[RMDB]
Chemical mapping of a 177-nucleotide RNA with 2A3 and DMS.
Source: RMDB library RFM100, as collected in RNAgym.
RNA sequence: GGGAACGACUCGAGUAGAGUCGAAAAUGCGUUCAGGCUCUCGAUACGCCGGGAUAACCUGGCGUCAGACCUGCCGGAACUUAGCAGGGAAUCGUUACGGAUCUGCUGUAUAGCCGGAUCCACACGAAAUGUAAAGCGGCUUCGGCCGCUUUACAUUAAAAGAAACAACAACAACAAC
Reactivity to 2A3 in 0.01 (KOAc 150mM, MgCl2 10mM, bicine 150mM(pH8.5), 24C), signal-to-noise 1, nucleotides 027 to 126: u090g050c000g000u000u120c000a050g020g070c080u020c000u010c000g020a050u030a280c010g000c020c000g020g000g020a160u170a300a170c000c000u000g000g000c000g060u000c000a010g000a020c000c000u130g000c000c010g000g000a030a030c040u090u140a090g020c000a000g000g140g090a010a170u020c020g000u090u120a140c180g010g000a000u000c000u040g000c000u090g200u200a130u240a080g040c050c010g010g000a000u030c030c000a030c000a000c000g030a000
Reactivity to DMS in 0.01 (KOAc 150mM, MgCl2 10mM, bicine 150mM(pH8.5), 24C), signal-to-noise 1, nucleotides 027 to 126: u010g000c060g000u000u040c000a090g000g000c010u000c080u000c090g050a050u000a000c030g020c000c010g110g030g000a190u010a140a140c020c050u000g030g040c000g030u000c120a070g000a000c040c030u040g000c040c140g000g000a110a060c000u070u000a110g030c000a050g010g020g110a030a010u000c010g000u000u030a080c150g000g000a000u000c000u000g000c000u010g000u030a090u100a000g000c100c180g050g000a000u000c000c050a290c190a040c050g000a000